[RMDB]
Conditions: 150 mM KOAc, 10 mM MgCl2 and 150 mM bicine (pH 8.5), 24 C. Structure probing data (2A3 and DMS) for a 207-nucleotide construct. For 2A3 the reverse transcriptase was SuperScript II with manganese.
RNA sequence: GGGAACGACUCGAGUAGAGUCGAAAAGCUCCCACGAGAGUGGGAGCAUACCAUGAGAAUGGUAGAGCUCUACAAUUCUUGUACAGGGAGGAAAACCCGUAGAGCACUCUACUCCGUUAGAUCGAGAGAUCGAGGAGUAGUGUGAAUGUACAGAAUGACUAGACAUGAUGUUCGCAUCAUGUCUAGUAAAAGAAACAACAACAACAAC
Reactivity to 2A3 in 0.01 (KOAc 150mM, MgCl2 10mM, bicine 150mM(pH8.5), 24C), signal-to-noise 2, nucleotides 027 to 156: g020c000u010c020c000c000a000c010g050a030g010a010g010u000g010g000g000a000g000c000a000u010a000c000c000a010u000g020a000g070a080a030u020g000g000u020a020g010a030g050c000u010c000u020a010c020a040a130u090u030c020u030u000g000u000a010c020a020g020g020g010a040g020g060a040a030a010a060c010c000c000g000u000a030g000a000g030c000a010c000u020c000u000a000c000u000c000c000g040u040u120a040g000a000u000c000g000a010g000a010g000a080u000c010g000a050g000g000a000g000u000a020g000u010g000u010g030a040a050u030g000u010a010c010a000g020a030a080u180g060
Reactivity to DMS in 0.01 (KOAc 150mM, MgCl2 10mM, bicine 150mM(pH8.5), 24C), signal-to-noise 1, nucleotides 027 to 156: g000c000u000c000c000c010a030c000g010a040g000a290g090u000g000g020g000a020g010c000a000u000a000c000c010a060u020g000a030g000a200a020u000g010g000u010a090g000a180g040c050u000c010u000a000c020a040a140u000u000c030u000u000g020u000a060c030a070g000g000g000a100g030g010a130a090a060a130c010c010c000g010u020a120g010a110g020c000a110c010u000c000u000a000c000u000c000c000g010u010u000a210g030a000u000c000g000a300g000a300g010a010u000c010g010a110g030g010a060g020u010a000g030u000g000u000g000a090a020u000g040u000a060c030a060g030a140a130u010g000